The record gives the reactivity of an RNA of 207 nucleotides to DMS and 2A3. The reactions ran in a buffer of 150 mM KOAc, 10 mM MgCl2 and 150 mM bicine (pH 8.5), at 24 C. For DMS the reverse transcriptase was MarathonRT.

RNA sequence: GGGAACGACUCGAGUAGAGUCGAAAACAGAUGCUCAGGUUGAUAGACUUAUUACGGGACGUCUAGCAUCACUAAAUGCAUUCGUCACACAGACACUAUCAAAACUAGCUGAAGUCCGCCAGCAGCGGCAGCUAGCCACUGAUAAAGUUAAUGAGUGCCAAACAUUAACUUUCGAGUUAAUGUUUGGAAAAGAAACAACAACAACAAC
Reactivity to DMS in 0.01 (KOAc 150mM, MgCl2 10mM, bicine 150mM(pH8.5), 24C), signal-to-noise 2, nucleotides 027 to 156: c000a100g030a100u000g000c020u040c060a100g000g020u000u000g000a040u000a040g020a110c010u000u000a080u000u010a130c100g000g000g030a090c090g020u000c030u000a170g060c020a050u000c070a150c170u010a100a070a080u010g040c010a080u000u000c010g020u000c000a110c080a110c100a120g020a200c080a110c050u000a040u000c000a030a080a160a130c030u000a010g010c020u000g000a050a210g010u000c040c010g050c010c040a230g000c090a300g020c000g020g030c000a030g010c040u000a000g000c010c000a090c180u010g010a050u000a000a090a140g000u010u000a060a050u000g000a090g010u000g010
Reactivity to 2A3 in 0.01 (KOAc 150mM, MgCl2 10mM, bicine 150mM(pH8.5), 24C), signal-to-noise 6, nucleotides 027 to 156: c030a020g090a110u130g040c020u010c050a020g050g050u050u040g010a040u030a040g050a070c030u110u110a090u090u220a180c080g030g020g020a000c000g010u000c020u040a100g000c000a010u070c050a040c210u190a180a130a040u020g000c000a000u020u010c020g010u000c010a030c010a010c020a150g070a060c020a020c100u010a010u020c000a000a010a040a070c010u000a000g000c000u000g020a090a020g200u030c000c000g010c020c040a100g080c060a000g000c090g000g000c000a000g000c000u010a000g020c030c020a030c030u010g020a070u090a160a130a010g010u040u090a060a050u080g020a010g050u060g020